Record summary: This 177-nucleotide RNA was probed chemically with 2A3 and DMS. The reactions ran in a buffer of 150 mM KOAc, 10 mM MgCl2 and 150 mM bicine (pH 8.5), at 24 C.

RNA sequence: GGGAACGACUCGAGUAGAGUCGAAAAGAGUCCUAUUUCGAUAGGACUCAACUAAAAUCAGCGGUAAAUAAUUAGCUGGCGUUAGCGCUGAACGCCAGCAUACUAGCCUCGUCUUCGGACGAGGCAAUGAUUUAAAUUCAUUCGUGAAUUUAAAUCAAAAAGAAACAACAACAACAAC
Reactivity to 2A3 in 0.01 (KOAc 150mM, MgCl2 10mM, bicine 150mM(pH8.5), 24C), signal-to-noise 5, nucleotides 027 to 126: g000a000g000u010c000c010u010a010u020u070u060c170g060a020u000a010g000g030a010c000u000c000a000a000c000u070a020a010a030a120u030c000a010g020c010g300g180u180a040a060a050u070a030a120u160u190a070g000c000u000g000g000c000g010u010u020a120g050c010g000c020u000g010a000a000c000g000c010c000a000g000c000a000u010a000c040u050a030g010c000c010u000c010g000u000c000u020u040c200g090g000a000c000g000a000g000g000c000a000a000
Reactivity to DMS in 0.01 (KOAc 150mM, MgCl2 10mM, bicine 150mM(pH8.5), 24C), signal-to-noise 4, nucleotides 027 to 126: g000a020g000u000c000c000u000a000u000u000u020c160g020a020u000a000g020g000a010c000u000c000a040a110c130u000a050a060a070a120u000c000a010g020c000g040g030u020a030a040a030u010a020a030u000u000a150g010c000u000g010g010c000g000u000u000a100g010c020g000c010u000g000a030a030c010g010c000c010a010g010c000a030u010a040c210u010a120g010c000c000u000c000g000u000c000u000u000c230g030g000a010c000g000a000g010g010c000a000a000